[RMDB]
RNA sequence: GGGAACGACUCGAGUAGAGUCGAAAAUGCCUGCGGCAUUAGGCGGGUCAAUAGGAGAAUUGCGGCGAGGGGUGACUACUAUUGACUAUCCCAGCCGCUGAAUAUCUAGGGCGAGGGCAACGACCCGAAGCCACCAAGCUGGCGGGUCGCCCAGCCAAUCACGCGCUAAAUUCGUUUAGCGCGUGAUAAAAGAAACAACAACAACAAC
Reactivity to 2A3 in 0.01 (KOAc 150mM, MgCl2 10mM, bicine 150mM(pH8.5), 24C), signal-to-noise 1, nucleotides 027 to 156: u110g050c000c020u050g020c010g030g010c070a170u290u160a030g030g030c040g000g010g000u060c030a030a110u080a100g000g030a020g030a140a120u110u130g000c000g040g000c000g060a280g020g000g040g000u020g030a050c060u110a030c000u060a160u200u050g050a020c030u050a070u140c000c000c000a000g020c000c000g000c010u020g030a020a010u060a020u090c040u050a050g040g010g000c020g030a200g000g000g000c130a220a040c120g000a000c000c010c010g020a070a020g000c000c000a020c020c000a110a000g020c000u020g100g120c000g000g000g000u010c000g000c000c000c000a020g000c030c000a000